[RMDB]
RNA sequence: GGGAACGACUCGAGUAGAGUCGAAAAAUUUACAAAGCUACCUUGCAUUAUGCGUAAAUAGCCAUCUGCAUAUCCAAUAGGUAACAAAGCUAUUGUAGUUGGGUCAGUAGCUGUAUAAGUUGCACCACUUCCCCACCAAAUUCGUUUGGUGGGGAAGAAAAGAAACAACAACAACAAC
Reactivity to DMS in 0.01 (KOAc 150mM, MgCl2 10mM, bicine 150mM(pH8.5), 24C), signal-to-noise 1, nucleotides 027 to 126: a070u000u010u000a010c040a100a100a070g020c020u000a020c000c070u000u010g020c080a110u020u000a060u000g000c050g000u000a060a070a090u000a020g010c090c090a120u000c130u020g000c020a030u000a070u000c220c050a050a100u010a070g000g030u000a030a070c070a080a210a090g000c050u000a070u000u000g000u000a110g010u000u000g000g040g000u030c090a100g020u000a000g000c000u000g020u020a070u020a050a040g020u000u000g020c110a220c070c010a200
This 177-nucleotide RNA was probed chemically with DMS. Source: RMDB library OK2TRN, as collected in RNAgym. The reactions ran in a buffer of 150 mM KOAc, 10 mM MgCl2 and 150 mM bicine (pH 8.5), at 24 C. The DMS profile rests on 599 reads.